[RMDB]
RNA sequence: GGGAACGACUCGAGUAGAGUCGAAAAAUAAAGUUGCUCUGGUUCACACGCCUCUGACAAGAACAUCUUCAUGCCUGUGCCUGGUUGAGAGAGGGAGGCCUCUGCGCUGCUGCUGGAUCUAGUGAAGCUAACCUAGCUGGUUCGCCAGCUAGGUUAGAAAAGAAACAACAACAACAAC
Reactivity to DMS in 0.01 (KOAc 150mM, MgCl2 10mM, bicine 150mM(pH8.5), 24C), signal-to-noise 1, nucleotides 027 to 126: a100u010a030a050a090g020u020u000g000c030u000c060u000g000g010u000u000c080a100c140a110c150g000c060c010u000c030u000g030a060c100a090a120g020a060a080c060a040u010c040u000u000c090a080u000g020c000c030u000g000u010g020c020c020u030g000g000u000u010g030a080g000a030g030a060g040g020g000a150g010g000c000c030u000c040u000g010c060g020c010u010g010c030u000g110c060u010g000g000a110u000c050u000a100g000u020g000a070a110g030

Conditions: 150 mM KOAc, 10 mM MgCl2 and 150 mM bicine (pH 8.5), 24 C. This 177-nucleotide RNA was probed chemically with DMS. Source: RMDB library OK2TST, as collected in RNAgym. For DMS the reverse transcriptase was MarathonRT. The DMS profile rests on 1,103 reads.